[RMDB]
Chemical mapping of a 177-nucleotide RNA with 2A3 and DMS.
Reactivities are given for positions 27 through 126.
Conditions: 150 mM KOAc, 10 mM MgCl2 and 150 mM bicine (pH 8.5), 24 C.
RNA sequence: GGGAACGACUCGAGUAGAGUCGAAAAUGGAUCAGGCCGUCCCGCUGGCUUCUGACUCAUGGACUAACGCUACGGGAGUGAGCAUCUUCGACGGCCAGCUUCAGAUCGCCAUCGGCACGAAUUCCACCAUGCUGCAUUACUUCGGUAAUGCAGCAUGAAAAGAAACAACAACAACAAC
Reactivity to 2A3 in 0.01 (KOAc 150mM, MgCl2 10mM, bicine 150mM(pH8.5), 24C), signal-to-noise 7, nucleotides 027 to 126: u090g040g030a040u060c080a090g010g000c010c020g030u020c040c020c000g000c020u020g060g000c000u030u010c020u040g120a130c010u050c130a130u130g060g010a050c040u070a160a020c120g010c120u130a040c040g040g020g000a030g040u070g100a020g020c020a040u060c070u250u160c080g040a040c010g010g000c000c000a000g000c000u020u020c000a050g020a150u070c030g020c040c010a110u110c030g000g020c040a030c080g030a040a070u050u010c010c010a050c030
Reactivity to DMS in 0.01 (KOAc 150mM, MgCl2 10mM, bicine 150mM(pH8.5), 24C), signal-to-noise 3, nucleotides 027 to 126: u000g020g010a020u000c090a070g020g000c000c000g040u010c030c230c100g040c000u000g010g000c020u000u010c040u000g010a130c080u000c120a150u000g030g000a180c070u030a110a090c280g000c010u010a120c060g000g030g000a070g000u010g020a030g010c050a040u010c110u080u030c240g010a020c070g000g010c000c000a000g000c070u000u010c080a050g000a070u020c080g000c040c040a110u020c040g000g000c050a080c070g010a160a120u000u000c000c050a120c220